[RMDB]
RNA sequence: GGGAACGACUCGAGUAGAGUCGAAAAGAUAUGGACGGUGGAACUACGCGUGGAGAGGUUCUCGGAAACGAGAACUACCCACCUCCACCGCCACCGUCCUAAGUCAAAACCCAAGUUCGCUUGGGAACAUACAUUGCUUCUUCGGAAGCAAUGUAUGAAAAGAAACAACAACAACAAC
Reactivity to DMS in 0.01 (KOAc 150mM, MgCl2 10mM, bicine 150mM(pH8.5), 24C), signal-to-noise 4, nucleotides 027 to 126: g000a020u010a300u000g000g000a030c010g000g000u010g000g000a090a050c110u000a270c060g010c200g010u000g010g000a020g040a080g020g000u000u010c000u000c000g000g000a060a090a190c000g000a010g000a000a000c000u000a030c050c030c090a300c090c000u000c000c000a010c000c020g000c010c000a010c000c010g020u000c000c000u000a000a110g000u000c050a070a050a110a110c010c000c020a000a020g000u000u010c160g000c010u000u020g000g000g020a080a170
Reactivity to 2A3 in 0.01 (KOAc 150mM, MgCl2 10mM, bicine 150mM(pH8.5), 24C), signal-to-noise 4, nucleotides 027 to 126: g020a030u080a040u180g000g020a000c020g010g030u030g010g050a170a110c150u270a120c300g080c120g000u010g000g000a010g000a010g000g020u010u000c000u010c010g000g040a080a080a030c000g000a000g000a000a000c000u020a020c010c010c010a040c010c000u000c000c000a000c010c000g010c010c000a010c000c010g000u000c000c000u000a040a000g020u000c010a020a030a070a110c000c010c010a000a000g030u060u180c300g020c130u000u010g020g010g000a020a010
Annotation:
The record gives the reactivity of an RNA of 177 nucleotides to DMS and 2A3. For 2A3 the reverse transcriptase was SuperScript II with manganese.